[RMDB]
RNA sequence: GGGAACGACUCGAGUAGAGUCGAAAACUCAAGUACACCGCCGAAGCCGCGGCAUUCACAUAACACCCAUGCGGGUCUACGGGCCUGUGUGCAGUGGUGUGGAUGGGUAGGGGAGCGUCGUGCAGCCCACUCGUGAAGCAUUCGUGCUUCACGAGUGAAAAGAAACAACAACAACAAC
Reactivity to 2A3 in 0.01 (KOAc 150mM, MgCl2 10mM, bicine 150mM(pH8.5), 24C), signal-to-noise 5, nucleotides 027 to 126: c010u030c020a000a040g070u060a040c050a020c050c030g030c020c010g150a080a020g060c030c020g040c030g020g060c010a000u010u000c020a000c010a050u100a200a040c000a010c010c010c000a010u020g000c000g020g010g000u000c010u050a150c270g040g000g000c000c000u010g000u000g000u000g000c080a030g000u000g020g000u000g000u010g010g010a030u020g010g030g090u070a120g050g010g000g010a060g030c010g010u070c010g010u050g020c030a060g000c030c000
Reactivity to DMS in 0.01 (KOAc 150mM, MgCl2 10mM, bicine 150mM(pH8.5), 24C), signal-to-noise 4, nucleotides 027 to 126: c020u010c020a110a140g010u020a070c080a150c050c020g020c010c020g010a160a150g030c090c050g030c030g010g000c030a030u000u010c010a010c030a050u010a070a150c010a030c010c300c000a020u000g010c000g000g000g050u000c000u020a120c230g030g010g000c000c000u000g010u020g020u000g000c280a060g020u000g020g010u010g000u000g010g010a030u000g010g020g000u020a080g000g000g000g000a120g000c040g010u000c050g000u020g000c090a080g000c030c060